[RMDB]
RNA sequence: GGGAACGACUCGAGUAGAGUCGAAAAGAAGUACGCGGAGCAUCAAGAUGGUUUUGCGUGGAGAUUUGACAGCACUUUGUUGUGGAAGCAUCGGCGCUAAAGUGUACAUUGCCGAGAGACUGGCAGCUGACUCAUAAUCGUUCGCGAUUAUGAGUCAAAAAGAAACAACAACAACAAC
Reactivity to DMS in 0.01 (KOAc 150mM, MgCl2 10mM, bicine 150mM(pH8.5), 24C), signal-to-noise 2, nucleotides 027 to 126: g010a110a120g000u000a040c070g020c050g040g000a080g020c060a040u010c110a080a130g020a060u000g000g000u000u000u000u010g010c060g000u000g000g010a060g000a120u010u010u010g010a070c080a050g010c060a050c090u000u010u020g030u010u010g030u000g000g010a090a100g010c060a040u010c050g000g000c160g000c070u010a040a060a110g030u010g000u000a080c090a130u000u000g000c010c000g010a100g020a140g000a080c110u010g000g010c040a060g000c250
Reactivity to 2A3 in 0.01 (KOAc 150mM, MgCl2 10mM, bicine 150mM(pH8.5), 24C), signal-to-noise 1, nucleotides 027 to 126: g020a030a030g000u070a020c020g000c040g030g070a030g000c010a010u110c090a090a060g060a100u100g030g010u020u110u160u070g120c070g040u050g060g060a050g000a050u140u070u110g090a080c030a010g050c010a040c060u090u150u160g030u100u110g010u130g080g000a040a000g000c030a040u020c000g050g000c020g010c030u050a110a000a040g020u040g020u030a040c020a090u130u080g000c020c010g040a010g000a000g050a100c030u080g020g000c000a010g000c070
An RNA of 177 nucleotides, treated with DMS and 2A3 and read out base by base. For 2A3 the reverse transcriptase was SuperScript II with manganese. DMS adducts were read by reverse transcription with MarathonRT. DMS (dimethyl sulfate) methylates the pairing face of unpaired adenines and cytosines. The DMS profile rests on 1,796 reads.